The record gives the reactivity of an RNA of 177 nucleotides to 2A3. For 2A3, 559 sequencing reads were counted. It was measured as part of the RMDB library OK1LIB.

RNA sequence: GGGAACGACUCGAGUAGAGUCGAAAAGGUGGGCUUCUUCGGGAAGGCCGUUAAGCUGGCACCUACAGUCUACGCUCUGAUUACCCCGGUCAAAGUGGAAGAGGCUCGCCAGAAGCGUGAGACCAACAAAGGUGUAGCUGUUCGCAGCUACACCUUUAAAAGAAACAACAACAACAAC
Reactivity to 2A3 in 0.01 (KOAc 150mM, MgCl2 10mM, bicine 150mM(pH8.5), 24C), signal-to-noise 1, nucleotides 027 to 126: g030g040u090g000g030g020c000u000u000c000u010u010c000g040g000g160a020a020g120g020c010c000g000u020u040a000a000g100c000u040g080g000c000a040c060c020u030a110c070a020g070u010c020u020a000c040g000c010u000c040u060g010a010u110u090a060c000c000c000c040g000g010u000c040a000a060a270g130u110g090g000a010a020g010a000g000g000c020u000c000g020c000c000a000g000a000a000g070c070g050u080g060a090g000a110c090c010a080a060c050